RNA sequence: GGGAACGACUCGAGUAGAGUCGAAAAGAUAUGGAGCGUGAAGGAGAGGUGGUCCGAGGUCGGAAACGAUACAGACCACUACCCACCUCCCACGCUCCUAAGUCAAACCAGUUCUUCGGAACUGGAACCAAUUCUAUUAGUUCGCUAAUAGAAUUGGAAAAGAAACAACAACAACAAC
Reactivity to DMS in 0.01 (KOAc 150mM, MgCl2 10mM, bicine 150mM(pH8.5), 24C), signal-to-noise 8, nucleotides 027 to 126: g010a060u000a300u010g010g000a010g020c000g040u010g000a230a120g010g010a050g020a090g010g010u000g000g010u000c010c010g010a200g000g000u010c000g000g010a120a050a170c010g000a020u000a000c010a010g000a010c000c000a010c000u000a050c080c070c100a300c090c000u000c020c010c010a020c000g000c000u000c000c000u000a000a040g000u000c040a110a140a180c010c000a010g000u000u000c000u010u020c190g020g000a010a010c000u000g000g000a050a120
Reactivity to 2A3 in 0.01 (KOAc 150mM, MgCl2 10mM, bicine 150mM(pH8.5), 24C), signal-to-noise 6, nucleotides 027 to 126: g040a010u080a040u200g000g010a000g010c010g010u030g110a260a120g040g000a010g010a010g020g000u000g000g010u000c000c020g080a110g020g010u000c010g010g000a050a060a030c010g000a000u010a030c000a000g010a000c010c000a000c000u010a000c010c020c010a070c000c000u000c000c010c000a000c000g000c000u000c000c000u010a040a000g030u010c030a020a030a160c000c000a000g000u000u000c010u040u130c290g120g000a000a000c000u000g000g000a010a020
About this RNA: Conditions: 150 mM KOAc, 10 mM MgCl2 and 150 mM bicine (pH 8.5), 24 C. This 177-nucleotide RNA was probed chemically with DMS and 2A3. For 2A3, 31,927 sequencing reads were counted. It was measured as part of the RMDB library TTRDEL.